[RMDB]
RNA sequence: GGGAACGACUCGAGUAGAGUCGAAAAAAAAAGAUAUGGAGCUGACAUGCUGGACUUGUCGUUGAAAGUGCUUCGGAAACGAAGCACUGGAGACAAGGGCAGCAACAGCAGCUCCUAAGUCAAAAAACAUAUAAUGUACCUUCGGGUACAUUAUAUGAAAAGAAACAACAACAACAAC
Reactivity to 2A3 in 0.01 (KOAc 150mM, MgCl2 10mM, bicine 150mM(pH8.5), 24C), signal-to-noise 1, nucleotides 027 to 126: a000a030a000a000a050g040a030u110a040u120g010g010a000g030c010u000g090a210c010a090u090g000c000u020g030g170a030c000u000u000g010u010c020g240u180u020g060a020a000a000g010u000g000c000u010u000c020g000g020a070a070a030c000g000a010a010g010c000a000c000u010g010g010a000g000a000c000a000a000g010g030g210c000a000g010c000a020a040c050a030g080c000a000g000c000u000c010c000u020a090a030g030u050c030a100a120a050a000a000a100
Reactivity to DMS in 0.01 (KOAc 150mM, MgCl2 10mM, bicine 150mM(pH8.5), 24C), signal-to-noise 3, nucleotides 027 to 126: a050a060a070a090a070g010a070u000a300u000g000g020a010g010c000u000g020a070c090a300u010g010c000u000g000g010a050c000u000u010g010u000c010g000u010u020g000a120a110a030g010u000g010c000u000u010c010g010g000a110a060a210c010g020a010a000g020c000a000c000u000g000g010a050g010a000c010a000a010g000g000g010c020a010g020c000a000a020c180a140g000c000a000g010c010u000c000c000u000a010a070g010u010c020a000a040a080a100a060a210